An RNA of 177 nucleotides, treated with DMS and 2A3 and read out base by base. Source: RMDB library OK2TST, as collected in RNAgym. The DMS profile rests on 2,233 reads. Conditions: 150 mM KOAc, 10 mM MgCl2 and 150 mM bicine (pH 8.5), 24 C. Values are in units of 0.01, from 0 to 300, in steps of 10.
[RMDB]
RNA sequence: GGGAACGACUCGAGUAGAGUCGAAAAGCAGUCAGCCGCAAUAUUCCGGCGAUUAUGGUUUCUCUGCCCCGAUUGGAAACCCGGUCACGGCUGCCGAAAACAUCUAUACCAUGUCCAACGCGGAAAACGAUUAGGGAUGAUUCGUCAUCCCUAAUCGAAAAGAAACAACAACAACAAC
Reactivity to DMS in 0.01 (KOAc 150mM, MgCl2 10mM, bicine 150mM(pH8.5), 24C), signal-to-noise 3, nucleotides 027 to 126: g020c030a070g020u010c020a220g020c010c010g020c130a090a110u000a170u000u000c140c000g000g020c040g000a070u000u000a060u000g010g000u000u000u000c010u000c220u000g010c040c020c000c020g020a110u020u000g000g010a030a040a040c050c000c110g020g000u000c060a110c080g020g030c040u000g020c000c030g000a100a040a120a060c120a060u000c050u010a050u010a120c080c020a020u000g010u010c030c030a050a130c110g010c080g010g000a050a050a100a170
Reactivity to 2A3 in 0.01 (KOAc 150mM, MgCl2 10mM, bicine 150mM(pH8.5), 24C), signal-to-noise 2, nucleotides 027 to 126: g030c040a010g010u040c020a010g000c040c000g040c060a090a070u080a150u280u050c010c010g020g000c040g020a010u040u100a070u220g050g000u000u010u050c070u020c060u120g040c030c000c000c000g060a090u070u170g050g010a020a070a070c000c060c000g010g000u020c030a000c060g000g000c000u010g000c010c010g050a070a010a000a000c020a010u040c010u040a070u020a100c000c010a040u070g040u000c010c010a070a020c060g030c030g040g000a030a070a030a020